[RMDB]
RNA sequence: GGGAACGACUCGAGUAGAGUCGAAAAGAUAUGGAUCACUCGAGGAACUACUCUUAAGGUUCGGAAACGAACCCAUAGAGCCUAAGACAGGUGAUCCUAAGUCAAAAGUGCUACUUCGGUAGCACAAGGUACAUAAGCACUUCGGUGCUUAUGUACCAAAAGAAACAACAACAACAAC
Reactivity to DMS in 0.01 (KOAc 150mM, MgCl2 10mM, bicine 150mM(pH8.5), 24C), signal-to-noise 2, nucleotides 027 to 126: g000a020u000a250u000g000g020a000u000c000a000c010u020c000g020a160g000g040a110a060c110u000a220c000u000c000u000u000a230a100g010g010u000u010c000g010g000a040a060a050c020g030a020a000c000c010c010a110u000a010g010a010g030c040c000u010a090a090g000a100c300a050g000g000u010g000a000u000c000c000u000a000a130g010u000c020a040a080a110a080g000u000g010c000u010a000c020u000u000c200g010g000u010a000g010c000a010c000a030a000
Reactivity to 2A3 in 0.01 (KOAc 150mM, MgCl2 10mM, bicine 150mM(pH8.5), 24C), signal-to-noise 2, nucleotides 027 to 126: g020a010u070a020u130g010g000a010u030c010a030c050u120c060g070a070g080g040a100a060c120u300a120c010u290c020u050u020a140a080g000g000u010u000c000g010g000a010a030a000c000g000a000a000c000c000c000a010u040a030g020a020g040c000c020u100a120a030g090a060c100a110g000g060u020g000a000u000c000c000u000a060a030g050u030c010a020a060a060a170g010u000g010c000u010a010c000u050u160c300g160g000u000a000g000c010a000c000a000a010